[RMDB]
RNA sequence: GGGAACGACUCGAGUAGAGUCGAAAAUUGAAGGUAAAACAGCCUGUGGGUGAAACACACCCACAGGGCCCUUUGGGCGCUAGCACUCUGGUAUCACGGUACCUUCGUGCGCCUGUUUUACCGAAGGUACCUGGCGCCUUCGGGCGCCAGAAAAGAAACAACAACAACAAC
Reactivity to DMS in 0.01 (KOAc 150mM, MgCl2 10mM, bicine 150mM(pH8.5), 24C), signal-to-noise 3, nucleotides 027 to 129: u030u020g030a280a220g000g030u000a000a040a010a020c050a050g030c000c000u000g000u000g020g050g050u060g030a160a160a080c300a100c060a010c020c020c000a010c010a000g040g010g070c020c010c010u050u040u020g030g000g030c000g030c030u030a060g030c040a040c000u010c210u000g020g000u000a050u040c050a090c240g040g030u010a020c000c000u030u030c280g000u040g030c010g050c020c010u010g000u000u000u010u000a030c000c010g030a030a120g000g000u020a060c100
Reactivity to 2A3 in 0.01 (KOAc 150mM, MgCl2 10mM, bicine 150mM(pH8.5), 24C), signal-to-noise 2, nucleotides 027 to 129: u110u120g090a080a020g030g000u010a000a000a020a010c000a010g000c000c000u000g010u000g020g000g030u030g060a050a120a050c190a000c000a010c080c000c000a010c030a010g000g000g010c000c000c000u050u060u100g000g000g000c010g000c050u060a060g060c000a020c000u000c000u050g010g000u010a000u060c030a030c110g160g000u000a000c000c000u000u000c030g000u000g010c000g000c000c000u000g020u000u000u000u000a000c000c000g000a000a000g040g030u020a020c020
Structure probing data (DMS and 2A3) for a 170-nucleotide construct. Values are in units of 0.01, from 0 to 300, in steps of 10. The data come from the RNA Mapping Database (RMDB), library 15KLIB. The reactions ran in a buffer of 150 mM KOAc, 10 mM MgCl2 and 150 mM bicine (pH 8.5), at 24 C. 2A3 adducts were read by reverse transcription with SuperScript II with manganese.